[RMDB]
RNA sequence: GGGAACGACUCGAGUAGAGUCGAAAACACACUCCCUUCGGGGAGUGUGAAAGAACGCGUGGGACACGCAAGGAGGAGCGUGUGGGACGCCACAAACCCAAAAAAGUGGAUAGUUCGCUAUCCACAAGGAAUAUACUCAGUUCGCUGAGUAUAUUCCAAAAGAAACAACAACAACAAC
Reactivity to DMS in 0.01 (KOAc 150mM, MgCl2 10mM, bicine 150mM(pH8.5), 24C), signal-to-noise 5, nucleotides 027 to 126: c000a000c000a000c000u000c010c000c000u000u020c180g040g000g010g000a010g040u000g000u010g020a030a060a090g000a080a100c300g010c010g010u010g020g010g000a050c000a010c020g000c020a060a080g000g010a300g000g010a100g010c010g020u000g010u000g040g020g010a050c020g020c000c080a070c170a050a090a120c010c000c020a010a050a070a070a080a090g000u000g000g000a020u000a000g010u000u000c210g010c010u000a000u000c000c000a000c000a030a030
Reactivity to 2A3 in 0.01 (KOAc 150mM, MgCl2 10mM, bicine 150mM(pH8.5), 24C), signal-to-noise 6, nucleotides 027 to 126: c000a000c000a000c000u000c010c010c010u010u040c190g040g000g010g010a000g000u000g000u000g000a000a000a000g040a120a030c080g020c010g010u030g020g290g020a000c000a000c010g010c050a050a060g170g080a090g070g050a140g040c000g000u000g000u000g020g210g000a000c020g030c020c010a030c020a030a060a040c000c000c000a050a080a020a020a020a010g000u000g000g000a000u000a000g010u040u060c220g000c100u000a000u000c000c000a000c000a000a010